An RNA of 170 nucleotides, treated with 2A3 and DMS and read out base by base.
Source: RMDB library 15KLIB, as collected in RNAgym.
The 2A3 profile rests on 3,104 reads.
For DMS, 7,705 sequencing reads were counted.
Reactivities are given for positions 27 through 129.

RNA sequence: GGGAACGACUCGAGUAGAGUCGAAAAACAUUCACUGUUGUAAUGCGCCCUAACUACACAAUUAAGGGUUCCUUUCUGUGUGGUUCUUGUGGUAGUGUUGGUUACACCAAGGAGGGUAGUGUGAUCAUAAGGUAGAGCUUCGGCUCUACCAAAAGAAACAACAACAACAAC
Reactivity to 2A3 in 0.01 (KOAc 150mM, MgCl2 10mM, bicine 150mM(pH8.5), 24C), signal-to-noise 4, nucleotides 027 to 129: a000c030a060u180u290c060a030c210u020g000u050u000g030u050a000a100u090g020c020g070c000c010c010u040a070a010c030u000a000c030a010c020a100a270u130u090a150a000g120g010g090u170u230c030c000u000u050u030c040u010g010u030g000u000g020g000u050u010c100u140u100g040u210g050g000u110a150g080u120g160u130u030g010g010u000u000a000c050a010c000c060a190a080g110g000a020g010g180g000u160a040g000u000g010u000g030a000u030c000a030u030a050a040
Reactivity to DMS in 0.01 (KOAc 150mM, MgCl2 10mM, bicine 150mM(pH8.5), 24C), signal-to-noise 3, nucleotides 027 to 129: a200c100a120u020u080c000a140c090u010g020u010u050g040u030a110a050u030g010c000g000c000c020c020u030a100a000c030u030a050c050a100c020a000a090u010u020a000a060g000g030g070u060u030c000c010u000u000u040c060u000g010u000g030u030g050g000u020u020c220u000u030g030u010g040g010u020a000g030u000g040u040u020g000g000u030u000a010c100a030c060c070a140a040g040g040a160g050g000g050u050a120g070u140g000u040g000a060u010c040a010u060a220a090